[RMDB]
RNA sequence: GGGAACGACUCGAGUAGAGUCGAAAAAAUUUUUUCGGUCUCGUCAGACAAAUCAGAGACAUGAUGGUCAUAGCGAAAGCACACGCACGAAAUGUCACUGAUGAAAAAGUGCGUGUGACCAAUUUAAUUGAGUCAGGUAAUUCGUUACCUGACUCAAAAAAGAAACAACAACAACAAC
Reactivity to DMS in 0.01 (KOAc 150mM, MgCl2 10mM, bicine 150mM(pH8.5), 24C), signal-to-noise 2, nucleotides 027 to 126: a010a030u000u000u000u000u010u000c060g010g000u010c000u000c080g050u020c100a180g000a170c150a070a110a050u010c080a110g010a060g000a020c040a050u020g010a080u000g020g030u020c010a040u000a110g000c010g010a110a080a080g000c020a120c010a000c000g000c000a060c030g000a030a100a040u010g010u000c040a140c170u030g000a100u000g020a000a020a060a100a160g000u000g020c000g010u000g010u000g000a010c010c030a040a050u000u040u030a030a110
An RNA of 177 nucleotides, treated with DMS and read out base by base. It was measured as part of the RMDB library M2PK90. Conditions: 150 mM KOAc, 10 mM MgCl2 and 150 mM bicine (pH 8.5), 24 C. Reactivities are given for positions 27 through 126. For DMS, 1,238 sequencing reads were counted.